RNA sequence: GGGAACGACUCGAGUAGAGUCGAAAACAACUGUUAUCUUGCCACUGCAUUGUUAACACACCAACAAAUAGAGUUGAAGUUUAAUCCACCUGCUCUACAAAGGGCUGGUGAAGCUGCUAACUUUUGUCCGGAAACACGUUCGCGUGUUUCAAAAGAAACAACAACAACAAC
Reactivity to 2A3 in 0.01 (KOAc 150mM, MgCl2 10mM, bicine 150mM(pH8.5), 24C), signal-to-noise 9, nucleotides 027 to 129: c010a000a010c050u030g020u060u040a080u050c040u050u120g040c020c050a090c080u090g000c040a050u030u070g050u080u090a070a010c030a010c000a000c060c010a020a060c030a050a160a090u240a070g070a000g030u010u040g040a070a020g010u030u070u170a080a060u030c020c000a000c010c020u010g000c000u010c010u030a100c090a070a200a060g000g000g000c000u020g010g010u010g000a010a010g010c030u050g000c050u000a030a020c000u030u020u030u070g070u040c020c040g040
Reactivity to DMS in 0.01 (KOAc 150mM, MgCl2 10mM, bicine 150mM(pH8.5), 24C), signal-to-noise 7, nucleotides 027 to 129: c080a040a030c190u040g010u040u020a060u040c000u000u000g000c040c170a150c160u000g030c040a060u020u020g010u050u050a020a030c120a110c100a250c100c070a110a090c080a030a040a030u080a050g020a060g040u010u000g040a070a030g000u020u040u040a100a110u050c100c030a000c040c010u020g000c020u020c020u040a110c300a120a100a060g050g040g000c000u000g040g000u030g000a000a040g040c040u020g000c120u070a030a040c050u000u000u000u000g020u070c030c120g040
Conditions: 150 mM KOAc, 10 mM MgCl2 and 150 mM bicine (pH 8.5), 24 C. Structure probing data (2A3 and DMS) for a 170-nucleotide construct. Values cover nucleotides 27 to 129. It was measured as part of the RMDB library 15KLIB.